Source information
An RNA of 177 nucleotides, treated with 2A3 and DMS and read out base by base. For 2A3, 2,968 sequencing reads were counted. It was measured as part of the RMDB library OK1LIB. The DMS profile rests on 2,685 reads. The RNA was probed in 150 mM KOAc, 10 mM MgCl2 and 150 mM bicine (pH 8.5) at 24 C.
RNA sequence: GGGAACGACUCGAGUAGAGUCGAAAAUCUUCGCGAAAUCGACGGCAGCCUCAGCAGCUCUGCGUGGGUGUGUGCCCCGCUGCUGCUCGCCGUAUCCGCGCUGGCGUGCACCGCUGUGGGCUGAAGAUCAGUGGUGGUAGUUCGCUACCACCACUGAAAAAGAAACAACAACAACAAC
Reactivity to 2A3 in 0.01 (KOAc 150mM, MgCl2 10mM, bicine 150mM(pH8.5), 24C), signal-to-noise 4, nucleotides 027 to 126: u010c020u100u100c000g010c050g080a070a080a110u120c080g080a070c010g050g000c000a010g010c000c040u100c020a030g010c000a000g010c010u060c080u150g000c040g030u300g010g000g020u120g030u070g130u300g050c000c000c000c000g000c020u070g000c010u000g000c020u030c010g010c000c000g020u020a110u010c010c010g000c000g020c100u070g020g000c010g020u020g010c010a030c060c080g000c030u020g000u130g020g010g000c000u010g050a040a010g010a080
Reactivity to DMS in 0.01 (KOAc 150mM, MgCl2 10mM, bicine 150mM(pH8.5), 24C), signal-to-noise 2, nucleotides 027 to 126: u000c040u000u010c020g050c110g000a080a100a100u020c070g010a030c060g020g000c000a050g020c060c080u000c200a060g000c010a120g010c000u040c150u020g000c000g010u140g010g030g000u000g030u060g000u080g000c000c000c000c000g010c000u000g000c110u000g000c010u000c100g010c020c060g000u020a020u050c100c030g000c070g000c140u030g020g000c030g000u010g010c050a040c090c110g000c010u000g000u030g000g000g000c020u000g000a030a050g000a120